[RMDB]
Structure probing data (2A3) for a 207-nucleotide construct. Reactivities are rounded to 0.1 and cut off at 0 and 3. For 2A3, 1,570 sequencing reads were counted. Source: RMDB library RNAMAK, as collected in RNAgym. The reactions ran in a buffer of 150 mM KOAc, 10 mM MgCl2 and 150 mM bicine (pH 8.5), at 24 C.
RNA sequence: GGGAACGACUCGAGUAGAGUCGAAAAGAUAUGGAUCGUUGUCAGAUCCAGUACAUCGAAGAACAUUCCUCGGAAACGAGGAAUGGGAGAUGUACGUACGGAUCUUGGAUUUACGAUCCUAAGUCAAAAGACCACAGGUCUUCGGACCUGUGGUCAAGAUCGUACAUCACUUCGGUGAUGUACGAUCAAAAGAAACAACAACAACAAC
Reactivity to 2A3 in 0.01 (KOAc 150mM, MgCl2 10mM, bicine 150mM(pH8.5), 24C), signal-to-noise 1, nucleotides 027 to 156: g010a020u090a050u130g000g010a000u000c000g010u020u010g010u030c000a010g000a000u020c000c010a000g010u000a000c000a000u000c040g190a300a030g010a020a000c020a040u000u000c000c000u000c000g000g050a090a060a040c000g010a010g020g000a010a000u000g000g000g020a090g000a000u000g000u000a000c000g000u060a040c030g010g010a000u020c020u080u160g130g030a040u190u150u160a010c030g010a000u000c000c000u000a100a000g030u020c000a000a050a080a050g040a000c000c040a000c000a000g010g000u000c000u070u170c210g050g000a000c000c000u000g000u000g000g000u000c000a000a000